Chemical mapping of a 177-nucleotide RNA with DMS and 2A3.
The reactions ran in a buffer of 150 mM KOAc, 10 mM MgCl2 and 150 mM bicine (pH 8.5), at 24 C.
2A3 adducts were read by reverse transcription with SuperScript II with manganese.

RNA sequence: GGGAACGACUCGAGUAGAGUCGAAAAAUCUUUCCAGCAUGUUUCUCCCAUUGAGAAACAUCCUAGCAUUUAAGGCCUCUUAAUGUAAGAUAAGCCGGGUACUAUCUCUUUUACUUCUCUCUCUACUUAUUGAGGUAGCAUUCGUGCUACCUCAAUAAAAAGAAACAACAACAACAAC
Reactivity to DMS in 0.01 (KOAc 150mM, MgCl2 10mM, bicine 150mM(pH8.5), 24C), signal-to-noise 2, nucleotides 027 to 126: a070u040c140u000u000u000c000c000a020g000c200a020u010g030u000u000u000c000u000c000c300c140a060u040u020g010a010g000a000a000a000c000a010u010c160c000u000a100g010c070a080u010u000u000a080a060g010g000c030c050u000c030u020u000a200a080u020g000u010a030a010g000a030u000a060a150g000c030c020g000g020g000u000a020c070u000a070u010c030u000c000u000u000u000u020a050c070u020u000c000u000c010u010c010u000c010u000a060c110u000
Reactivity to 2A3 in 0.01 (KOAc 150mM, MgCl2 10mM, bicine 150mM(pH8.5), 24C), signal-to-noise 5, nucleotides 027 to 126: a000u020c040u030u000u000c010c000a010g000c020a010u010g000u000u010u000c020u010c020c120c080a180u120u300g000a000g000a000a020a000c000a000u010c000c000u040a040g040c050a100u060u100u170a140a040g030g010c010c010u080c010u050u070a130a090u220g080u130a090a060g040a120u060a050a020g010c020c000g040g020g000u080a040c010u040a050u030c020u010c000u000u070u020u060a120c030u070u040c010u010c000u000c000u010c010u030a100c040u040